This 207-nucleotide RNA was probed chemically with 2A3 and DMS. DMS adducts were read by reverse transcription with MarathonRT. High 2A3 reactivity points to a flexible backbone, as in loops and unpaired stretches. The reactions ran in a buffer of 150 mM KOAc, 10 mM MgCl2 and 150 mM bicine (pH 8.5), at 24 C.
[RMDB]
RNA sequence: GGGAACGACUCGAGUAGAGUCGAAAAGAAGAAAAUCGGAGGCGCCAUUUGUGAUACAUUGUAUGGUUCGGACCUCUUUAGCUGAAAAUCACGAGCAUAGAAGGUUUCGGACUUGGUUGCUUCUUGGUUGGAUUUUCAGGAUCCACGAACGACACACACGCCAAUACUAGUUCGCUAGUAUUGGCGUAAAAGAAACAACAACAACAAC
Reactivity to 2A3 in 0.01 (KOAc 150mM, MgCl2 10mM, bicine 150mM(pH8.5), 24C), signal-to-noise 2, nucleotides 027 to 156: g050a030a000g030a010a030a020a030u030c030g030g000a000g020g030c040g020c040c020a060u090u020u060g090u080g060a040u110a160c030a140u130u230g050u100a030u190g000g010u000u000c000g000g000a000c010c000u000c020u060u010u010a030g000c040u070g040a060a000a040a210u290c070a110c220g010a010g030c000a060u000a030g060a090a090g110g030u040u120u280c000g020g040a000c000u000u010g000g020u090u300g000c000u040u000c000u120u210g110g000u120u030g010g000a010u000u000u050u090c140a110g120g000a020u030c000c020a090c120g030a130a000c070g150a010c050a000c000a000c000
Reactivity to DMS in 0.01 (KOAc 150mM, MgCl2 10mM, bicine 150mM(pH8.5), 24C), signal-to-noise 1, nucleotides 027 to 156: g020a110a190g010a120a050a070a110u010c040g010g040a070g040g040c000g000c020c000a060u000u000u010g000u000g000a240u000a140c060a170u020u000g010u020a140u040g000g000u000u000c000g030g020a060c010c010u010c020u000u000u010a160g040c050u000g000a020a120a090a200u010c170a080c120g000a050g000c020a080u000a020g000a020a050g030g010u020u000u000c010g010g010a020c000u010u000g010g010u000u020g010c000u000u000c000u010u010g020g010u000u010g020g000a120u000u000u020u010c130a260g040g030a070u010c020c010a110c060g020a070a170c060g020a110c080a110c120a110c150